Conditions: 150 mM KOAc, 10 mM MgCl2 and 150 mM bicine (pH 8.5), 24 C. Chemical mapping of a 177-nucleotide RNA with DMS and 2A3. 2A3 adducts were read by reverse transcription with SuperScript II with manganese. The data come from the RNA Mapping Database (RMDB), library OK1LIB.

RNA sequence: GGGAACGACUCGAGUAGAGUCGAAAAUAUCUGAUGUAAACAAUGUUGCAAUGUUUUCAUUAACACAUAUGUGCUUCUACAAAAAAUGCAUAUCGUAUCUAAUGUUAACAUCGUUAAGUAAUAAAAAUGUACAUAUGGAAUUCGUUCCAUAUGUACAAAAAGAAACAACAACAACAAC
Reactivity to DMS in 0.01 (KOAc 150mM, MgCl2 10mM, bicine 150mM(pH8.5), 24C), signal-to-noise 4, nucleotides 027 to 126: u030a040u010c040u000g010a040u040g010u060a030a050a130c230a100a080u020g030u010u000g020c070a080a020u010g020u000u000u000u020c010a010u000u000a070a060c130a020c030a020u010a000u000g010u000g000c070u000u000c120u020a130c300a020a010a050a020a010a020u000g030c000a000u000a010u010c150g040u000a030u020c130u000a000a020u010g010u000u000a000a000c000a010u020c130g010u010u010a040a050g000u020a020a070u020a040a040a060a070a080
Reactivity to 2A3 in 0.01 (KOAc 150mM, MgCl2 10mM, bicine 150mM(pH8.5), 24C), signal-to-noise 6, nucleotides 027 to 126: u230a030u070c140u110g070a050u090g110u260a050a050a100c080a120a110u200g070u080u090g040c020a020a040u020g010u000u010u000u000c010a020u030u000a030a010c030a000c020a050u010a010u030g010u010g030c050u040u050c040u100a160c160a050a180a020a020a000a030u140g000c000a000u010a000u020c140g010u050a020u020c100u030a060a000u010g000u010u010a010a000c010a020u020c020g020u050u140a120a100g100u030a120a110u130a140a060a030a030a040